[RMDB]
RNA sequence: GGGAACGACUCGAGUAGAGUCGAAAAGGAGUUAAGUUCGCUUAACUCCCACUACCGAGAAUGCGACUCGGUAUAUGGCAAUAACCCUUGGAAACAAGGGAACCACUGACGACUUCGGUCGUCAGAACGAACAGUAGUUGUUCGCAACUACUGUUCGAAAAGAAACAACAACAACAAC
Reactivity to 2A3 in 0.01 (KOAc 150mM, MgCl2 10mM, bicine 150mM(pH8.5), 24C), signal-to-noise 3, nucleotides 027 to 126: g010g000a000g010u000u020a020a000g010u050u100c140g030c090u010u010a010a000c000u000c010c010c010a060c010u020a000c010c010g030a000g030a090a160u290g120c130g130a060c020u010c000g000g000u010a010u000a010u030g010g050c070a030a030u080a140a230c000c000c000u000u000g030g030a050a030a000c000a000a000g000g010g010a000a020c000c000a020c020u000g000a000c000g010a010c010u000u050c210g100g040u010c000g000u000c000a000g000a020a020
Reactivity to DMS in 0.01 (KOAc 150mM, MgCl2 10mM, bicine 150mM(pH8.5), 24C), signal-to-noise 2, nucleotides 027 to 126: g000g020a010g000u000u000a000a000g020u000u000c230g030c000u000u020a000a010c000u000c000c010c050a080c110u000a030c010c020g000a030g000a120a050u010g030c240g000a100c000u000c000g000g010u000a030u000a050u000g010g030c210a070a090u020a080a100c000c000c000u000u000g010g000a160a090a170c000a000a000g000g000g010a050a030c040c050a180c010u000g000a030c000g000a020c000u000u030c140g030g030u010c010g000u000c010a000g000a070a110
About this RNA:
The data come from the RNA Mapping Database (RMDB), library M2PK50. Structure probing data (2A3 and DMS) for a 177-nucleotide construct. DMS adducts were read by reverse transcription with MarathonRT. The 2A3 profile rests on 4,737 reads.